[RMDB]
RNA sequence: GGGAACGACUCGAGUAGAGUCGAAAACAUUGUUCUGAUCAUCUGAAGAUCAGCUAUGAGAAGAGAAAGAUCAGUUAAGUCCUUUGGACCUGAUCAGCUUGAUACAAGAACUACUGAUUUCAACUUCAAAACGGGUGCUACUUCGGUAGCACCCGAACAACUAUAUGAUGUUCGCAUCAUAUAGUUGAAAAGAAACAACAACAACAAC
Reactivity to DMS in 0.01 (KOAc 150mM, MgCl2 10mM, bicine 150mM(pH8.5), 24C), signal-to-noise 3, nucleotides 027 to 156: c050a170u010u010g030u000u000c000u000g040a030u010c010a130u000c100u000g040a210a250g000a040u000c010a020g000c170u000a100u000g010a300g000a040a060g000a050g000a150a120a060g000a020u000c010a020g010u000u000a070a050g010u000c000c010u000u000u000g020g010a030c010c030u010g010a150u000c140a090g010c120u020u000g010a160u000a080c040a020a020g020a030a050c020u000a070c000u000g000a040u000u000u000c020a090a300c030u000u000c030a020a070a090a120c020g000g010g030u000g000c010u000a000c000u000u000c300g020g000u000a010g010c000a000c000c000c050g010a000a040
Reactivity to 2A3 in 0.01 (KOAc 150mM, MgCl2 10mM, bicine 150mM(pH8.5), 24C), signal-to-noise 8, nucleotides 027 to 156: c020a020u080u150g040u170u110c000u000g010a020u010c010a030u020c110u220g140a200a060g000a050u010c000a000g000c000u070a050u140g080a100g020a090a010g050a010g060a080a080a010g020a010u010c000a000g010u070u200a150a010g000u020c020c010u070u190u300g040g000a030c020c030u040g030a090u060c010a010g070c020u060u070g030a040u060a150c060a070a030g040a100a020c030u080a010c030u090g010a070u030u100u100c070a110a080c030u070u060c030a020a040a060a080c010g000g000g010u010g000c000u000a000c000u030u070c150g060g000u000a000g000c000a000c000c010c010g000a000a000